[RMDB]
RNA sequence: GGGAACGACUCGAGUAGAGUCGAAAAUACCCCAGGCCUGCGGUGCGGCAGUGUGGAGACCUGCCGUAAGCCGUGUUGUUUUGACAACCGGGAGAAAGCGUAUGCGGAGGCAGCGCUUUCAGGGUCUAAAAGUAUGGGAUCUUCGGAUCCCAUACAACGUUUAAUUUGGCUUCGGCCAAAUUAAACGAAAAGAAACAACAACAACAAC
Reactivity to 2A3 in 0.01 (KOAc 150mM, MgCl2 10mM, bicine 150mM(pH8.5), 24C), signal-to-noise 2, nucleotides 027 to 156: u100a050c010c000c000c010a020g010g030c000c040u070g030c030g050g000u030g010c020g050g020c010a010g010u070g040u060g300g000a030g020a100c000c000u010g000c000c000g010u010a070a020g000c000c000g060u070g010u010u030g000u000u040u080u180g050a000c020a070a030c040c000g040g040g010a220g020a030a000a000g000c000g000u050a300u130g030c050g030g100a050g250g100c000a000g000c000g000c010u010u000u000c000a030g050g000g000u020c000u020a060a040a000a020g000u000a000u000g000g000g000a000u000c000u030u060c200g080g000a000u010c020c000c000a000u000a000c010a000a000
This 207-nucleotide RNA was probed chemically with 2A3. The reactions ran in a buffer of 150 mM KOAc, 10 mM MgCl2 and 150 mM bicine (pH 8.5), at 24 C. For 2A3 the reverse transcriptase was SuperScript II with manganese.